[RMDB]
RNA sequence: GGGAACGACUCGAGUAGAGUCGAAAAGGUUCAGACCUUAGUACGAGAGGACCGGGUCUGACGCACCACUGGUGCAUCGGUUGUACUGUCAAGUGCAUGGCCGAGUAGCUAAGUGCGGACGGGAUAAAAGCUCUCUACUGUUCGCAGUAGAGAGCUUAAAAGAAACAACAACAACAAC
Reactivity to 2A3 in 0.01 (KOAc 150mM, MgCl2 10mM, bicine 150mM(pH8.5), 24C), signal-to-noise 2, nucleotides 027 to 126: g060g000u020u010c000a000g000a030c000c010u030u040a020g000u050a010c010g000a010g000a070g180g010a010c000c000g000g010g000u000c000u010g000a030c000g010c000a010c000c000a090c000u010g000g000u120g080c270a100u000c000g000g000u060u000g000u000a000c010u040g210u300c100a130a030g000u000g000c060a020u040g140g000c000c000g000a000g020u030a000g000c000u020a210a130g000u010g000c000g010g020a050c100g070g050g040a040u140a110a120
Reactivity to DMS in 0.01 (KOAc 150mM, MgCl2 10mM, bicine 150mM(pH8.5), 24C), signal-to-noise 3, nucleotides 027 to 126: g050g030u000u010c010a030g020a010c000c010u000u000a050g010u000a100c030g010a300g020a270g010g000a110c200c150g000g000g000u020c010u000g000a050c010g000c040a010c020c030a000c040u020g010g010u000g010c200a150u000c010g000g010u000u000g000u000a010c020u000g000u040c300a080a010g020u010g020c000a100u040g010g020c020c000g000a030g000u050a220g000c000u010a010a160g000u000g000c040g000g020a110c140g000g000g000a130u040a030a120